[RMDB]
An RNA of 177 nucleotides, treated with DMS and read out base by base. Values cover nucleotides 27 to 126. For DMS, 1,731 sequencing reads were counted.
RNA sequence: GGGAACGACUCGAGUAGAGUCGAAAAGAUAUGGAAGCAUGACUUCUAAUCCCAGUGGCUAGCUGUCAUGUCGGAAACGACAUCCCAGCUUGGACCCACGGGAUUAGAAGUCAUGCUUCCUAAGUCACAGUACUUUCAUCUUCGGAUGAAAGUACUGAAAAGAAACAACAACAACAAC
Reactivity to DMS in 0.01 (KOAc 150mM, MgCl2 10mM, bicine 150mM(pH8.5), 24C), signal-to-noise 1, nucleotides 027 to 126: g020a020u000a300u010g000g000a030a010g010c000a020u010g000a010c000u000u000c000u000a000a000u000c000c000c020a170g050u000g000g000c020u000a000g020c000u000g020u000c080a010u000g030u000c000g030g010a210a110a230c000g000a010c000a000u000c070c050c000a030g000c020u000u000g030g000a100c300c000c000a030c030g010g010g010a020u000u000a010g020a030a000g000u000c010a000u000g000c000u000u000c000c000u000a000a050g010u000c030a300